Structure probing data (2A3 and DMS) for a 177-nucleotide construct. 2A3 adducts were read by reverse transcription with SuperScript II with manganese. For 2A3, 916 sequencing reads were counted. Conditions: 150 mM KOAc, 10 mM MgCl2 and 150 mM bicine (pH 8.5), 24 C.

RNA sequence: GGGAACGACUCGAGUAGAGUCGAAAAACUAAAGCUUUCAUAAUGGUCAUAAGGCGGCUGACCAACGGUCUCCACUGUGAAGCACAAAUAGCGGGAUGUCGUCUGUUGGGCCGAGAAUGCGGGCCAAUGGGUAGUAGCAAUUCGUUGCUACUACCCAAAAAGAAACAACAACAACAAC
Reactivity to 2A3 in 0.01 (KOAc 150mM, MgCl2 10mM, bicine 150mM(pH8.5), 24C), signal-to-noise 2, nucleotides 027 to 126: a000c090u160a100a000a000g000c000u000u000u000c020a030u040a200a210u260g000g000u010c030a010u020a140a020g010g000c000g000g000c000u040g220a030c010c000a000a040c060g010g000u010c050u010c090c070a140c100u060g010u090g060a090a050g030c140a030c030a060a140a040u150a060g020c030g000g010g020a010u020g000u000c030g020u000c000u010g030u090u100g030g000g000c000c000g000a020g000a040a000u040g020c070g010g030g010c000c010a010a040
Reactivity to DMS in 0.01 (KOAc 150mM, MgCl2 10mM, bicine 150mM(pH8.5), 24C), signal-to-noise 5, nucleotides 027 to 126: a130c070u010a050a130a160g000c040u010u000u010c030a100u010a140a090u020g000g010u000c010a070u010a100a040g010g010c010g000g000c030u000g000a300c010c010a060a060c080g010g000u000c110u020c090c080a090c090u000g010u010g000a050a080g020c080a020c100a080a070a140u010a050g000c170g000g000g000a160u010g000u000c000g010u010c010u010g000u000u020g020g000g010c000c010g010a070g010a050a030u010g010c070g000g010g030c000c080a090a090